RNA sequence: GGGAACGACUCGAGUAGAGUCGAAAACACAUUCCUAAAUCCUUCGCCUGGGCCAAUCUGCUAGACAGCUGAGCGGAAUUCUCAUGCUUGUCCCAGGACAAGUUGAGAAUGUGGAAGUGAUAAUCCAACUGAGCAUCACGUUCGCGUGGUGCUCAGUAAAAGAAACAACAACAACAAC
Reactivity to 2A3 in 0.01 (KOAc 150mM, MgCl2 10mM, bicine 150mM(pH8.5), 24C), signal-to-noise 2, nucleotides 027 to 126: c020a000c010a150u000u050c010c000u010a090a010a030u030c000c000u040u060c000g000c000c000u050g000g000g000c010c000a020a030u020c010u060g000c010u030a010g010a070c040a040g010c020u060g020a010g010c040g000g000a040a040u020u000c000u010c000a000u110g020c000u000u000g000u010c000c010c020a010g000g050a000c000a000a000g000u000u000g030a040g000a000a010u030g010u020g010g010a020a020g020u060g100a070u020a040a030u040c000c000a010
Reactivity to DMS in 0.01 (KOAc 150mM, MgCl2 10mM, bicine 150mM(pH8.5), 24C), signal-to-noise 3, nucleotides 027 to 126: c110a000c080a200u030u010c010c000u000a050a090a100u010c060c000u000u000c120g000c040c020u030g000g010g010c000c030a010a140u020c070u000g000c060u030a100g000a130c120a060g010c050u000g000a010g020c100g000g000a090a020u010u020c010u000c000a010u020g000c020u000u000g000u000c000c000c120a190g010g020a030c010a000a010g000u000u000g010a050g000a010a010u000g000u000g000g010a080a030g010u000g000a050u030a130a080u000c000c040a070